[RMDB]
RNA sequence: GGGAACGACUCGAGUAGAGUCGAAAAGAACGGAGAAGAGCCGAUAGACGCUCUUAGAAAUAUAGUCUUCUCUUUUGCCCCUUCUUAUUUUGAAGCAAACGGGUCAUUCAUUCGGAAGCUGUUAUCUUACUUGGAAGUCGCCUUAAGGAACUCGCCAUCCGUCAUUAUUUUUCGAAAUAAUGACGGAAAAAGAAACAACAACAACAAC
Reactivity to DMS in 0.01 (KOAc 150mM, MgCl2 10mM, bicine 150mM(pH8.5), 24C), signal-to-noise 2, nucleotides 027 to 156: g000a090a090c090g020g020a120g030a060a060g000a070g010c020c050g020a220u010a140g020a120c060g000c040u000c020u000u010a090g000a140a100a100u000a080u010a150g000u010c010u010u010c020u010c030u010u000u000u010g010c060c030c030c010u030u000c030u010u000a160u000u020u000u000g000a060a110g020c040a030a020a120c060g010g010g040u000c060a060u010u000c020a170u010u000c050g000g010a100a140g030c010u010g000u000u000a080u000c050u000u010a060c070u000u010g000g010a060a070g000u000c030g000c020c020u000u020a060a170g010g010a050a060c030u000c050g010c040c030a170
Reactivity to 2A3 in 0.01 (KOAc 150mM, MgCl2 10mM, bicine 150mM(pH8.5), 24C), signal-to-noise 3, nucleotides 027 to 156: g040a080a010c050g010g010a040g010a030a030g000a010g000c010c030g040a040u140a110g050a040c020g010c010u000c000u010u030a040g050a040a090a010u150a030u050a070g070u010c020u030u000c030u020c000u080u050u020u060g050c030c000c010c000u050u030c020u020u110a300u160u250u130u200g040a020a000g010c110a040a060a110c060g000g010g040u060c050a040u130u090c010a030u090u080c070g010g010a010a010g030c030u010g010u060u050a080u080c070u040u050a080c030u050u020g030g020a050a030g060u190c030g010c010c000u030u020a060a050g010g020a040a020c000u000c050g030c000c000a010